Chemical mapping of a 177-nucleotide RNA with 2A3 and DMS. For DMS the reverse transcriptase was MarathonRT. For 2A3 the reverse transcriptase was SuperScript II with manganese. Reactivities are given for positions 27 through 126. For DMS, 3,881 sequencing reads were counted. The reactions ran in a buffer of 150 mM KOAc, 10 mM MgCl2 and 150 mM bicine (pH 8.5), at 24 C.
[RMDB]
RNA sequence: GGGAACGACUCGAGUAGAGUCGAAAACGCCUGUAAUCUCAGCUACUCAGGAGGCUGAGGCACAAGAACUGCUUGAACCUGGGAGGCGGAAGUUGCAGUGAGCCAAUAUCAUGCCACUGCACUCCAGCAAUAACCGGGGAUUCGUCCCCGGUUAUUGAAAAGAAACAACAACAACAAC
Reactivity to 2A3 in 0.01 (KOAc 150mM, MgCl2 10mM, bicine 150mM(pH8.5), 24C), signal-to-noise 3, nucleotides 027 to 126: c060g080c000c020u040g100u150a080a130u020c000u000c020a000g010c000u060a080c010u060c060a040g000g060a070g010g080c000u010g020a010g020g030c020a020c020a070a070g070a160a060c060u180g010c040u160u100g050a070a070c000c000u010g020g020g000a030g070g040c040g010g060a070a030g100u280u090g000c010a010g000u000g020a070g030c030c040a120a010u130a090u270c090a050u250g000c000c000a000c000u010g000c000a000c000u010c000c010a040g020
Reactivity to DMS in 0.01 (KOAc 150mM, MgCl2 10mM, bicine 150mM(pH8.5), 24C), signal-to-noise 4, nucleotides 027 to 126: c220g010c030c020u000g010u030a110a080u000c020u010c010a030g010c000u010a130c040u000c060a060g000g020a210g000g000c000u000g000a020g000g010c130a050c100a070a070g000a130a110c120u000g000c070u020u000g000a080a090c040c010u010g010g000g020a220g010g010c060g000g000a030a040g010u000u020g000c000a020g030u000g000a120g010c020c140a060a080u010a100u000c190a100u010g000c010c000a020c000u000g000c010a000c030u000c000c010a120g010